The record gives the reactivity of an RNA of 177 nucleotides to 2A3 and DMS.
RNA sequence: GGGAACGACUCGAGUAGAGUCGAAAACAUCGCGUAUUCGUACGCGAUGGUAGGGCUGUUUUUCUCGCUGACUUUCAGCCCCAUACAAAAAAGUCAGCAAAAUACGCGUAUCCUUCGGGAUACGCAAUAAAGUCACUAAAUUCGUUUAGUGACUUUAAAAAGAAACAACAACAACAAC
Reactivity to 2A3 in 0.01 (KOAc 150mM, MgCl2 10mM, bicine 150mM(pH8.5), 24C), signal-to-noise 4, nucleotides 027 to 126: c000a010u000c000g000c000g020u010a020u020u090c230g040u040a000c000g000c000g000a000u000g000g010u070a090g000g020g010c000u000g020u010u000u010u020u010c090u050c110g010c010u010g000a010c000u000u000u000c000a000g000c000c000c000c040a120u210a120c070a000a000a000a000a000a000g000u000c000a000g000c000a000a010a000a010u030a000c020g000c000g010u000a000u010c000c000u020u070c130g040g000g000a000u000a000c000g010c000a000a000
Reactivity to DMS in 0.01 (KOAc 150mM, MgCl2 10mM, bicine 150mM(pH8.5), 24C), signal-to-noise 7, nucleotides 027 to 126: c000a000u000c000g010c000g010u000a020u010u010c210g020u000a010c000g010c000g010a000u000g000g000u000a090g000g010g010c000u000g000u000u000u000u000u010c070u010c190g010c000u000g000a020c000u000u000u000c000a000g000c000c000c010c170a040u000a090c140a000a010a000a000a020a020g010u000c000a000g010c000a020a020a050a070u010a050c170g010c000g010u000a000u000c000c000u000u010c200g020g010g000a000u000a000c000g010c000a020a010

For 2A3 the reverse transcriptase was SuperScript II with manganese. For 2A3, 11,810 sequencing reads were counted.